[RMDB]
RNA sequence: GGGAACGACUCGAGUAGAGUCGAAAAGAUGGGACAGCAACUUUAUGUAAGACAGUUUCUGGAUGUAAAUUGACCAGUCCUGUACUGACGUGUGGAAAUCCUCCUAGGAUAGGGGUGUCUUGCACAAUCUCCCCCUCAGGUUCGCCUGAGGGGGAGAAAAAGAAACAACAACAACAAC
Reactivity to DMS in 0.01 (KOAc 150mM, MgCl2 10mM, bicine 150mM(pH8.5), 24C), signal-to-noise 1, nucleotides 027 to 126: g000a120u000g000g030g000a050c010a040g000c060a020a000c130u000u060u010a140u000g020u060a070a020g020a020c110a100g020u010u000u010c000u000g000g000a060u010g000u030a030a030a150u000u000g000a080c000c070a130g000u000c040c040u020g000u020a070c120u010g000a170c140g000u040g020u000g000g000a010a130a110u000c010c010u000c000c010u000a070g020g000a160u020a040g000g000g030g000u000g000u000c090u000u030g010c090a050c140a070a050
Reactivity to 2A3 in 0.01 (KOAc 150mM, MgCl2 10mM, bicine 150mM(pH8.5), 24C), signal-to-noise 2, nucleotides 027 to 126: g080a050u010g000g000g000a000c080a040g050c020a060a010c020u060u070u000a100u280g140u180a000a000g000a010c030a050g000u000u030u140c000u050g100g000a050u000g000u210a050a100a120u170u210g080a080c000c030a030g030u100c050c000u020g030u060a290c010u030g030a050c070g050u000g000u050g090g000a000a070a000u000c000c010u040c060c000u020a080g000g270a070u060a010g000g050g000g000u080g000u050c020u020u110g000c000a050c060a040a110
Chemical mapping of a 177-nucleotide RNA with DMS and 2A3. DMS adducts were read by reverse transcription with MarathonRT. For DMS, 1,384 sequencing reads were counted. It was measured as part of the RMDB library OK1LIB.